[RMDB]
RNA sequence: GGGAACGACUCGAGUAGAGUCGAAAAGAUAUGGAGCGAUUAUGCAAGCCUGAUAUCGGAAACGAUAUUAAAGGUGAUGACCAUACUGUCGCUCCUAAGUCAAAACCAGGUGGUUCGCCACCUGGAAGUAAAUAAGAUUGUUCGCAAUCUUAUUUACAAAAGAAACAACAACAACAAC
Reactivity to DMS in 0.01 (KOAc 150mM, MgCl2 10mM, bicine 150mM(pH8.5), 24C), signal-to-noise 8, nucleotides 027 to 126: g010a010u000a040u010g000g000a020g020c000g020a020u000u000a010u000g000c010a070a050g010c000c000u000g000a010u000a000u000c000g020g000a010a010a040c000g010a010u000a000u000u000a030a100a040g040g030u000g010a060u020g000a050c300c010a010u000a010c300u000g000u000c010g020c000u000c000c000u000a000a070g000u010c010a120a090a110a220c010c000a010g000g030u000g000g010u010u000c240g010c000c000a000c000c000u000g000g000a020a060
Reactivity to 2A3 in 0.01 (KOAc 150mM, MgCl2 10mM, bicine 150mM(pH8.5), 24C), signal-to-noise 6, nucleotides 027 to 126: g000a000u020a000u070g000g000a000g010c010g000a010u020u020a010u030g030c060a070a100g000c000c010u020g000a000u000a000u010c010g000g000a010a000a010c000g000a000u000a020u030u230a300a300a050g000g010u030g130a300u060g020a010c000c000a010u010a030c100u060g010u030c000g000c000u000c000c000u010a010a000g000u010c000a020a010a110a240c000c000a000g010g010u010g000g090u070u120c300g060c100c000a000c000c000u000g000g000a010a010

The record gives the reactivity of an RNA of 177 nucleotides to DMS and 2A3. High DMS reactivity at an A or C suggests that its Watson-Crick edge is free. For DMS, 13,663 sequencing reads were counted. DMS adducts were read by reverse transcription with MarathonRT.